[RMDB]
RNA sequence: GGGAACGACUCGAGUAGAGUCGAAAAACUGACGGUACGCCGUCAGAGCGGUAGAAAAGAUGGUUUGAAAACCACGCCUUCUACCAAUAUAGUAAAUAAAUAGGCGGAGCGGUCAUACGUGACCGCAAAAACAUCCUUGGCUUCGGCCAAGGAUGAACUUCGUGUUUUUCUUCGGAAAAACACGAAGAAAAGAAACAACAACAACAAC
Reactivity to 2A3 in 0.01 (KOAc 150mM, MgCl2 10mM, bicine 150mM(pH8.5), 24C), signal-to-noise 2, nucleotides 027 to 156: a000c020u000g000a010c010g000g020u080a030c140g050c030c000g000u000c000a000g000a000g000c100g010g000u000a000g010a020a010a010a020g080a260u020g000g100u020u080u210g130a170a160a020a000c000c000a000c000g000c010c000u020u000c000u000a000c000c000a010a000u100a010u020a020g050u050a020a070a150u140a060a060a030u170a010g010g000c010g000g020a000g000c000g000g020u000c000a000u050a120c150g100u040g000a000c000c010g000c000a000a000a000a000a000c000a000u000c010c000u000u000g020g000c000u060u050c220g080g000c000c000a000a000g000g000a000u000g000a000a000